[RMDB]
This 177-nucleotide RNA was probed chemically with DMS and 2A3. The DMS profile rests on 9,230 reads. The reactions ran in a buffer of 150 mM KOAc, 10 mM MgCl2 and 150 mM bicine (pH 8.5), at 24 C. Reactivities are rounded to 0.1 and cut off at 0 and 3.
RNA sequence: GGGAACGACUCGAGUAGAGUCGAAAAACCCGCCGAGACUCGGGGCGCCGAAAAUGGACGGGGCUCAAGCCGGCCGCCGAUACCCCGGGGCUCCGAAAGGAGAUCCGGUAGGGGGGCGUGCCGAUGGAGUCCUUAGUAUCUUCGGAUACUAAGGACUAAAAGAAACAACAACAACAAC
Reactivity to DMS in 0.01 (KOAc 150mM, MgCl2 10mM, bicine 150mM(pH8.5), 24C), signal-to-noise 4, nucleotides 027 to 126: a090c010c010c000g020c100c050g000a100g010a080c070u000c060g000g020g000g000c110g000c000c010g000a070a070a160a100u030g020g000a120c030g000g000g000g030c030u020c050a100a100g010c060c030g000g000c000c010g010c010c000g020a130u040a180c000c030c000c010g000g030g000g010c000u000c000c000g010a070a070a160g000g010a010g000a020u010c000c000g000g000u010a080g000g000g010g010g000g020c010g010u020g010c010c000g000a040u010g000g010
Reactivity to 2A3 in 0.01 (KOAc 150mM, MgCl2 10mM, bicine 150mM(pH8.5), 24C), signal-to-noise 5, nucleotides 027 to 126: a000c010c000c000g000c040c030g100a070g020a080c040u040c090g020g000g010g030c030g110c000c010g110a140a100a020a120u180g080g050a040c020g010g000g040g000c010u020c070a050a030g040c010c000g000g000c000c000g000c000c010g100a150u140a170c000c000c000c000g000g000g010g000c000u000c000c000g060a080a020a010g010g000a000g000a020u010c000c010g000g020u100a100g020g000g000g030g000g000c020g040u140g010c000c000g010a030u100g050g030